[RMDB]
Chemical mapping of a 170-nucleotide RNA with DMS and 2A3. Conditions: 150 mM KOAc, 10 mM MgCl2 and 150 mM bicine (pH 8.5), 24 C. 2A3 adducts were read by reverse transcription with SuperScript II with manganese. High DMS reactivity at an A or C suggests that its Watson-Crick edge is free.
RNA sequence: GGGAACGACUCGAGUAGAGUCGAAAACACUUUUACAACAGUGAAACCUGGCGCAGCAUUUAGUGUGUUAGCAUGCUAUAAUGGUCGUCCGACUGGUACAUUCACUGUUGUAAUGCGCCCUAACUACAACGGUCAUCGUUCGCGAUGACCAAAAGAAACAACAACAACAAC
Reactivity to DMS in 0.01 (KOAc 150mM, MgCl2 10mM, bicine 150mM(pH8.5), 24C), signal-to-noise 1, nucleotides 027 to 129: c120a110c000u090u010u000u000a010c040a000a040c020a000g030u020g030a020a040a120c000c050u030g000g000c000g000c000a080g030c000a020u000u000u000a030g030u020g000u010g000u010u130a100g090c030a000u050g000c000u010a040u110a000a000u050g000g030u040c050g000u070c050c060g050a100c000u050g020g030u000a140c120a100u060u010c030a000c010u030g060u060u030g020u000a000a000u000g020c090g000c020c000c040u050a070a130c160u060a050c130a070a090c170
Reactivity to 2A3 in 0.01 (KOAc 150mM, MgCl2 10mM, bicine 150mM(pH8.5), 24C), signal-to-noise 5, nucleotides 027 to 129: c040a020c020u050u050u030u030a000c000a000a010c000a000g010u000g000a010a000a010c020c000u030g000g000c010g030c060a150g040c000a000u010u000u000a000g000u000g010u000g060u040u040a110g200c010a010u000g000c010u020a030u050a210a020u020g050g100u090c010g010u020c020c020g090a070c100u060g000g000u090a080c070a100u000u000c000a000c000u000g000u000u000g000u000a000a000u000g000c020g040c000c000c000u020a090a060c060u130a060c050a130a020c060